[RMDB]
RNA sequence: GGGAACGACUCGAGUAGAGUCGAAAAAGAUGCAUUACGAUGCAUCAAGGGUGAAGUUCAGUCCCGAUACUGUAAGGGUCCUGGCCCUGAUAAGGGCCGAUCCUGUCAGCUAGUGUACGCACUAGCAGACCUCACAAUUGUUCGCAAUUGUGAGGUCAAAAGAAACAACAACAACAAC
Reactivity to DMS in 0.01 (KOAc 150mM, MgCl2 10mM, bicine 150mM(pH8.5), 24C), signal-to-noise 5, nucleotides 027 to 126: a050g000a020u000g000c000a010u000u010a140c180g040a090u000g010c000a000u000c000a070a100g010g020g010u020g010a120a130g000u020u000c080a130g000u000c010c010c010g000a110u030a070c150u020g000u030a140a030g010g000g010u010c010c190u020g050g010c000c000c020u000g010a150u040a110a040g000g000g000c010c000g000a000u000c000c010u010g010u030c090a070g000c010u010a000g010u010g010u010a120c180g010c000a010c000u000a010g010c060a080
Reactivity to 2A3 in 0.01 (KOAc 150mM, MgCl2 10mM, bicine 150mM(pH8.5), 24C), signal-to-noise 6, nucleotides 027 to 126: a000g000a000u000g000c000a000u020u060a070c250g110a020u000g000c000a000u010c010a030a070g200g010g010u170g100a120a120g050u190u180c060a040g090u090c000c000c020g050a090u150a210c050u090g070u190a030a080g010g010g000u020c050c140u090g020g000c000c020c000u030g020a060u090a200a140g000g000g000c000c000g000a000u010c000c000u020g030u040c020a000g000c000u000a000g010u000g020u020a040c230g000c160a000c000u000a000g010c000a000